[RMDB]
RNA sequence: GGGAACGACUCGAGUAGAGUCGAAAAAUCAAUCACACAAUCUAAUGUAGGUUUAUGACAUAAUAGCAUUUUCAGCAGUUCAAUGUUUCUAGAUUCGUUGAUGGCAAUGGCUAUACAUGUAUAUCCGUUAUUUGAUCUAAUGUUGACAUCUGAACCGUAAUUUAGAAUUCUUCGGAAUUCUAAAUUAAAAAGAAACAACAACAACAAC
Reactivity to DMS in 0.01 (KOAc 150mM, MgCl2 10mM, bicine 150mM(pH8.5), 24C), signal-to-noise 4, nucleotides 027 to 156: a100u000c040a100a090u000c010a060c040a090c120a090a060u000c020u000a120a130u010g020u000a050g020g010u000u000u000a040u010g010a070c040a090u000a070a100u000a110g010c070a090u010u000u000u000c060a100g020c000a080g000u000u000c040a040a080u000g020u000u000u000c020u000a090g010a080u000u000c020g030u000u000g010a050u010g010g020c040a060a050u000g010g010c070u000a070u020a060c060a090u000g000u000a080u000a080u000c040c030g020u000u000a100u010u000u000g010a060u000c060u000a040a080u010g020u000u000g000a030c040a040u000c030u000g010a020a060c030c020g020
Reactivity to 2A3 in 0.01 (KOAc 150mM, MgCl2 10mM, bicine 150mM(pH8.5), 24C), signal-to-noise 8, nucleotides 027 to 156: a000u070c030a020a040u080c010a020c010a010c020a080a060u040c030u140a070a040u070g050u050a080g030g040u060u090u070a070u120g060a030c020a020u120a080a030u020a100g020c020a040u040u040u090u180c050a030g010c010a030g040u070u030c030a050a020u040g040u020u100u020c090u110a090g020a240u070u060c020g020u030u020g020a020u030g040g000c020a050a040u050g060g000c000u010a020u030a100c040a050u060g020u030a030u010a020u110c010c020g040u100u060a050u040u040u090g020a020u000c030u080a080a060u100g020u050u030g020a020c020a070u020c030u040g020a020a020c030c020g030